[RMDB]
RNA sequence: GGGAACGACUCGAGUAGAGUCGAAAAGGUAUGAUUAGGGCGAGACCUAGGAACCGUAGGGGUAUUCUCAAAGGAAGCUUUUGCAGUGACGCCCAUGUAAGUGGGAUAUAACAACAGAACUCGUAUGUGUGGCACAGAGAGUUCGCUCUCUGUGCAAGACUAUAUUCCUGUUCGCAGGAAUAUAGUCAAAAGAAACAACAACAACAAC
Reactivity to DMS in 0.01 (KOAc 150mM, MgCl2 10mM, bicine 150mM(pH8.5), 24C), signal-to-noise 3, nucleotides 027 to 156: g020g030u000a070u000g020a120u010u000a040g000g000g010c000g000a160g000a130c030c030u000a080g010g000a120a080c040c000g070u000a070g020g010g010g010u000a040u000u000c040u000c040a100a100a170g020g000a080a050g010c050u000u000u000u000g010c040a130g010u010g020a110c120g000c000c010c000a020u010g010u020a120a200g020u000g000g000g000a090u000a080u000a120a090c050a060a090c060a090g000a070a030c060u000c060g030u000a100u000g020u000g010u000g010g010c010a010c010a000g000a030g000a030g030u000u000c280g040c030u010c000u000c010u000g030u000g010c020a010a030
Reactivity to 2A3 in 0.01 (KOAc 150mM, MgCl2 10mM, bicine 150mM(pH8.5), 24C), signal-to-noise 4, nucleotides 027 to 156: g080g020u100a060u150g070a130u100u130a040g030g000g020c020g020a060g020a160c010c050u040a040g000g070a040a040c020c010g030u040a010g000g040g000g000u040a150u090u030c080u020c030a070a070a000g040g010a060a000g030c010u020u040u100u110g010c030a030g000u010g050a020c060g020c000c000c020a000u020g060u070a080a110g020u010g000g000g010a010u030a020u050a140a030c060a000a020c010a010g090a090a040c030u060c110g040u090a100u120g080u010g020u040g040g000c000a000c000a000g010a000g000a000g000u030u020c040g050c010u000c000u000c000u000g000u000g000c000a000a000
This 207-nucleotide RNA was probed chemically with DMS and 2A3. The DMS profile rests on 6,619 reads. For 2A3, 3,887 sequencing reads were counted. The reactions ran in a buffer of 150 mM KOAc, 10 mM MgCl2 and 150 mM bicine (pH 8.5), at 24 C. For 2A3 the reverse transcriptase was SuperScript II with manganese. Values cover nucleotides 27 to 156. DMS adducts were read by reverse transcription with MarathonRT.